[RMDB]
RNA sequence: GGGAACGACUCGAGUAGAGUCGAAAACUUACGUGGUUCGCCACGUAAGAAAGUGCAAGAGGAGCGAUGAACCCACACAAAACAAGACAUCGAAAAAUAAAAAAACACGCUGCUUCGGCAGCGUGAACAAUUACCUUCCCUUCGGGGAAGGUAAUUGAAAAGAAACAACAACAACAAC
Reactivity to 2A3 in 0.01 (KOAc 150mM, MgCl2 10mM, bicine 150mM(pH8.5), 24C), signal-to-noise 2, nucleotides 027 to 126: c000u000u010a010c000g000u000g000g030u010u020c060g060c060c000a010c000g000u000a000a000g000a040a020a000g110u090g060c020a050a030g040a060g100g020a040g040c000g020a020u050g040a080a100c000c060c000a050c000a000c000a000a130a050a030c010a000a010g110a020c010a020u040c040g110a110a040a030a070a020u300a020a130a020a010a000a020a000c000a000c000g000c000u000g000c000u040u030c220g070g000c000a000g020c010g010u000g010a000a000
Reactivity to DMS in 0.01 (KOAc 150mM, MgCl2 10mM, bicine 150mM(pH8.5), 24C), signal-to-noise 1, nucleotides 027 to 126: c000u000u010a000c000g020u000g000g010u000u010c190g000c000c000a000c010g020u000a000a010g000a040a030a150g000u000g020c150a050a140g020a120g000g030a100g000c010g020a080u020g030a130a060c050c020c000a070c070a090c140a060a040a040a020c100a040a060g010a100c010a050u010c020g000a020a040a090a080a070u050a050a020a010a130a030a090a130c000a000c000g010c000u000g000c000u000u010c160g000g020c020a010g000c000g000u000g000a020a070
This 177-nucleotide RNA was probed chemically with 2A3 and DMS.
For DMS, 965 sequencing reads were counted.
For 2A3 the reverse transcriptase was SuperScript II with manganese.
Reactivities are rounded to 0.1 and cut off at 0 and 3.
The reactions ran in a buffer of 150 mM KOAc, 10 mM MgCl2 and 150 mM bicine (pH 8.5), at 24 C.